Annotation
Structure probing data (DMS and 2A3) for a 177-nucleotide construct.

RNA sequence: GGGAACGACUCGAGUAGAGUCGAAAAGAUCUAUCCUUCGGGAUAGAUCAAACUAUAGCCCGGGCAAAACGGGAACGCACCCCAAAACCCGGGCAUAUGCGAAAACUCGCCACUUCGGUGGCGAGAACUAUACUAAUUCCUUCGGGAAUUAGUAUAGAAAAGAAACAACAACAACAAC
Reactivity to DMS in 0.01 (KOAc 150mM, MgCl2 10mM, bicine 150mM(pH8.5), 24C), signal-to-noise 2, nucleotides 027 to 126: g000a000u020c000u000a010u000c000c020u010u020c290g010g010g000a000u000a010g000a000u000c000a040a070a100c040u000a030u020a090g010c010c000c010g000g010g010c050a060a050a100a160c300g000g000g000a060a090c240g000c280a110c080c010c000c050a080a130a180a110c000c000c010g000g030g000c000a010u000a000u000g000c090g010a070a090a060a140c010u000c000g020c010c000a010c000u000u020c180g020g040u000g010g000c000g000a000g010a000a060
Reactivity to 2A3 in 0.01 (KOAc 150mM, MgCl2 10mM, bicine 150mM(pH8.5), 24C), signal-to-noise 1, nucleotides 027 to 126: g000a000u000c000u000a000u000c010c020u030u070c260g040g020g000a000u000a010g000a000u000c000a010a000a010c000u020a010u060a100g020c020c000c000g000g000g020c100a080a100a010a060c060g000g020g070a040a040c090g070c070a110c030c000c000c060a050a060a020a040c010c000c000g020g000g010c020a000u030a020u010g050c010g070a060a010a060a110c000u000c000g000c000c000a020c000u000u120c240g090g000u050g000g040c000g000a000g010a010a000
For DMS, 1,860 sequencing reads were counted. The RNA was probed in 150 mM KOAc, 10 mM MgCl2 and 150 mM bicine (pH 8.5) at 24 C. 2A3 adducts were read by reverse transcription with SuperScript II with manganese.